[RMDB]
RNA sequence: GGGAACGACUCGAGUAGAGUCGAAAAUGGAGCAGCGCCGCUAAUAGCAGCACUCAAAGUGCACUGUUGAUGCUGUUCUUCGGACUGGGCACUCUGCCAGCGAUGAUGACCACCAGUCUGCUGGCGAGCCAUCACGCUAAUUCGUUAGCGUGAUGGCAAAAGAAACAACAACAACAAC
Reactivity to 2A3 in 0.01 (KOAc 150mM, MgCl2 10mM, bicine 150mM(pH8.5), 24C), signal-to-noise 2, nucleotides 027 to 126: u090g010g020a010g030c030a000g000c060g010c090c040g000c070u020a020a010u050a060g050c080a050g000c000a020c030u150c120a140a060a020g050u070g000c050a020c100u060g020u120u050g020a090u050g010c000u000g000u010u040c000u000u020c070g090g040a080c050u080g000g000g000c060a030c080u040c070u140g000c040c000a010g000c000g080a180u150g000a020u130g050a070c030c020a010c020c010a050g030u010c070u080g040c000u010g000g020c020g000a030
Reactivity to DMS in 0.01 (KOAc 150mM, MgCl2 10mM, bicine 150mM(pH8.5), 24C), signal-to-noise 2, nucleotides 027 to 126: u000g010g000a020g020c040a020g010c000g030c090c100g000c180u020a040a040u000a030g020c040a150g000c000a020c050u010c220a090a060a200g010u010g010c040a240c030u010g010u020u000g000a050u020g000c020u000g010u000u010c030u000u000c030g000g000a130c060u000g020g000g000c070a110c110u020c040u010g010c000c010a020g010c020g000a060u000g000a100u000g010a120c110c040a120c090c080a170g010u010c010u000g010c010u000g010g000c020g000a070